[RMDB]
RNA sequence: GGGAACGACUCGAGUAGAGUCGAAAAUACGACGUAUUCGUACGUCGUAAAGGUACGAAAGUACAAAGGAGCAAAACCAUGAGCUCCUAAAAAUCAUGCAAAACACGAGCCGAUUCGUCGGCUCGAACAAUAAAUUGCCGUUCGCGGCAAUUUAUUGAAAAGAAACAACAACAACAAC
Reactivity to 2A3 in 0.01 (KOAc 150mM, MgCl2 10mM, bicine 150mM(pH8.5), 24C), signal-to-noise 1, nucleotides 027 to 126: u020a000c010g000a000c020g000u000a020u010u080c150g010u050a000c000g000u000c010g020u000a000a000a030g090g010u020a000c020g020a140a020a030g000u000a010c000a040a300a020g030g010a010g010c000a000a020a070a070c010c000a050u030g060a000g020c020u000c030c000u020a010a040a010a000a000u160c060a060u150g090c060a010a060a130a090c100a030c030g000a010g000c000c000g040a030u030u050c160g050u000c010g120g020c000u010c000g010a000a000
Reactivity to DMS in 0.01 (KOAc 150mM, MgCl2 10mM, bicine 150mM(pH8.5), 24C), signal-to-noise 2, nucleotides 027 to 126: u000a000c000g010a030c000g020u000a010u000u010c130g010u000a000c000g000u000c010g060u000a000a030a050g050g030u000a000c010g000a140a110a160g050u000a000c000a090a070a040g000g010a010g030c000a010a110a070a150c080c010a050u010g000a300g000c000u000c000c010u010a020a030a080a100a020u010c120a070u000g000c170a060a040a080a080c290a090c010g000a010g020c000c010g000a050u000u010c120g010u010c000g030g000c010u000c010g010a030a050
This 177-nucleotide RNA was probed chemically with 2A3 and DMS. The reactions ran in a buffer of 150 mM KOAc, 10 mM MgCl2 and 150 mM bicine (pH 8.5), at 24 C. DMS adducts were read by reverse transcription with MarathonRT.